[RMDB]
The record gives the reactivity of an RNA of 177 nucleotides to 2A3 and DMS. 2A3 adducts were read by reverse transcription with SuperScript II with manganese. The data come from the RNA Mapping Database (RMDB), library OK2TST. The DMS profile rests on 16,339 reads.
RNA sequence: GGGAACGACUCGAGUAGAGUCGAAAAGAGAGAAAGAGGGAGGACGGGAGGACAAACGACGGAUCGGGCAGCAAAGUAAGGUGUACUGUAUUGCCGCAAUUGUUUGCCCAGUUCAGUAUGUAUACAACUACUUACUAACGUUCGCGUUAGUAAGUAGAAAAGAAACAACAACAACAAC
Reactivity to 2A3 in 0.01 (KOAc 150mM, MgCl2 10mM, bicine 150mM(pH8.5), 24C), signal-to-noise 9, nucleotides 027 to 126: g070a000g010a000g030a020a110a020g060a060g020g040g000a090g030g020a030c030g010g010g030a060g010g010a020c050a050a160a010c060g060a010c030g020g000a020u060c010g000g000g000c000a010g000c010a020a020a040g040u110a080a040g060g020u060g030u090a100c090u130g080u250a150u090u200g010c010c010g020c020a030a100u040u040g060u130u230u100g020c000c010c000a000g000u010u020c010a010g020u040a060u210g060u030a060u030a090c050a060a040
Reactivity to DMS in 0.01 (KOAc 150mM, MgCl2 10mM, bicine 150mM(pH8.5), 24C), signal-to-noise 9, nucleotides 027 to 126: g010a130g010a110g010a060a070a070g000a130g010g000g010a100g010g010a090c110g000g010g000a100g010g010a090c130a040a060a070c060g010a070c080g010g000a030u000c060g010g010g010c020a030g000c050a030a040a080g000u010a070a140g010g020u000g010u000a060c170u010g010u010a190u020u000g010c050c030g010c090a080a070u000u000g000u000u000u000g010c000c050c000a040g010u000u000c020a070g020u000a030u000g010u010a080u000a080c190a070a180